[RMDB]
RNA sequence: GGGAACGACUCGAGUAGAGUCGAAAAGUUGCCGACGAACCUUCCAACCUUCCAAACGUGGUUUUCGACAACCUUCCAACCUUCCAAUCUACUCGAGAGGAGGAGGAGGAGGAGGAGGAGGAAUUAAAUGUACGAAGAAUUUCGAUUCUUCGUACAUAAAAGAAACAACAACAACAAC
Reactivity to DMS in 0.01 (KOAc 150mM, MgCl2 10mM, bicine 150mM(pH8.5), 24C), signal-to-noise 4, nucleotides 027 to 126: g000u000u000g010c020c010g030a080c180g010a090a090c040c010u000u010c030c030a120a080c110c020u000u000c010c030a100a090a120c210g000u010g010g010u000u000u000u000c040g000a060c090a040a050c040c030u000u000c020c010a090a170c070c050u000u000c020c040a170a300u000c010u000a030c030u000c030g000a070g020a280g000g010a110g000g000a160g000g010a180g000g000a130g000g000a090g010g020a110g010g000a150g000g000a280a050u000u010a000a050
Reactivity to 2A3 in 0.01 (KOAc 150mM, MgCl2 10mM, bicine 150mM(pH8.5), 24C), signal-to-noise 3, nucleotides 027 to 126: g020u020u010g050c000c000g010a050c060g030a030a030c000c000u110u070c060c030a080a070c040c020u100u060c020c000a180a080a060c090g030u070g010g010u000u020u060u040c010g030a010c020a050a020c010c020u090u050c030c050a060a080c020c020u120u000c030c010a040a080u000c000u040a020c020u020c040g030a020g010a020g050g040a060g030g020a050g020g070a060g000g000a060g010g080a030g030g060a040g010g060a040g000g040a010a000u130u090a090a220

Structure probing data (DMS and 2A3) for a 177-nucleotide construct. It was measured as part of the RMDB library M2PK90. The RNA was probed in 150 mM KOAc, 10 mM MgCl2 and 150 mM bicine (pH 8.5) at 24 C.